[RMDB]
Notes: An RNA of 177 nucleotides, treated with 2A3 and DMS and read out base by base.
RNA sequence: GGGAACGACUCGAGUAGAGUCGAAAAUCGCUGUUCCAUAUCUUGCGAGACUUGAGGUAUCGCAUGAACUGCUUUUCAACACCGAGUGACUCGAGCACCUCAGGUCGGCAGUGUCCAGCAGUUCAGCAAUAGGUAGCUCGUUCGCGAGCUACCUAUUAAAAGAAACAACAACAACAAC
Reactivity to 2A3 in 0.01 (KOAc 150mM, MgCl2 10mM, bicine 150mM(pH8.5), 24C), signal-to-noise 3, nucleotides 027 to 126: u060c010g000c090u050g040u080u050c010c020a020u020a090u150c050u090u140g020c020g010a190g020a090c010u050u070g040a000g070g030u030a010u150c030g050c090a150u050g010a010a000c000u070g030c010u160u140u180u210c100a150a110c090a110c010c100g050a020g060u070g070a050c060u020c030g020a020g100c040a020c000c000u030c030a030g040g000u000c000g010g040c040a040g020u010g030u100c040c000a010g000c010a020g020u000u060c000a030g000c020
Reactivity to DMS in 0.01 (KOAc 150mM, MgCl2 10mM, bicine 150mM(pH8.5), 24C), signal-to-noise 2, nucleotides 027 to 126: u000c090g000c060u000g000u020u000c000c010a070u040a050u000c060u050u020g020c060g010a110g030a020c000u000u000g050a070g000g020u000a070u010c010g000c150a010u050g010a150a050c000u000g000c030u010u050u020u090c160a110a040c180a120c040c000g020a100g000u010g000a230c040u050c090g000a030g000c100a000c060c010u040c010a020g000g000u000c000g020g010c060a040g000u000g000u000c070c110a010g010c050a070g000u000u000c020a060g020c170

Values cover nucleotides 27 to 126. The reactions ran in a buffer of 150 mM KOAc, 10 mM MgCl2 and 150 mM bicine (pH 8.5), at 24 C. For 2A3 the reverse transcriptase was SuperScript II with manganese. It was measured as part of the RMDB library OK1LIB.